Notes:
Structure probing data (DMS and 2A3) for a 207-nucleotide construct. For DMS the reverse transcriptase was MarathonRT. For DMS, 2,193 sequencing reads were counted.

RNA sequence: GGGAACGACUCGAGUAGAGUCGAAAAGUCUGGCUUCGGCCAGACAAAAAGCGUACUACGACUGAUGACCCUGAGAAGUAGUAAUCAGCUCCCAAAUAGGAGCUGUACAACUACCUCAGGCAAGGUCGUAUCGCAAAAAGCCACCUUCGGGUGGCAAGACUUAGGUACAGUUCGCUGUACCUAAGUCAAAAGAAACAACAACAACAAC
Reactivity to DMS in 0.01 (KOAc 150mM, MgCl2 10mM, bicine 150mM(pH8.5), 24C), signal-to-noise 1, nucleotides 027 to 156: g010u000c000u000g010g000c000u020u000c300g040g000c000c020a000g000a000c020a040a020a080a130a070g000c000g020u000a030c140u010a010c000g030a080c020u010g040a110u010g000a070c300c010c000u000g010a030g020a090a170g010u010a020g010u000a150a280u030c000a010g000c000u000c000c000c020a050a140a210u000a070g000g000a000g020c000u020g000u000a000c070a200a050c040u000a000c010c000u000c000a020g000g000c000a020a090g010g030u000c000g000u000a010u000c030g000c050a050a020a110a080a080g000c010c000a010c020c000u000u010c300g090g000g000u000g000g070c000a000a000
Reactivity to 2A3 in 0.01 (KOAc 150mM, MgCl2 10mM, bicine 150mM(pH8.5), 24C), signal-to-noise 2, nucleotides 027 to 156: g000u000c030u010g000g020c000u030u050c250g080g000c010c000a010g010a020c010a000a030a000a000a000g030c030g040u080a090c030u000a000c020g020a000c000u010g060a180u130g020a210c030c010c020u000g000a000g040a300a090g010u000a000g000u020a010a100u060c000a000g010c010u000c020c050c000a160a300a070u300a080g000g000a000g000c000u010g000u000a020c040a090a000c000u000a000c000c000u000c000a000g000g020c000a050a030g000g000u000c000g000u000a000u150c000g000c000a000a190a000a000a000g010c000c000a000c000c000u050u080c260g130g010g010u000g000g000c010a000a000
The reactions ran in a buffer of 150 mM KOAc, 10 mM MgCl2 and 150 mM bicine (pH 8.5), at 24 C. 2A3 adducts were read by reverse transcription with SuperScript II with manganese.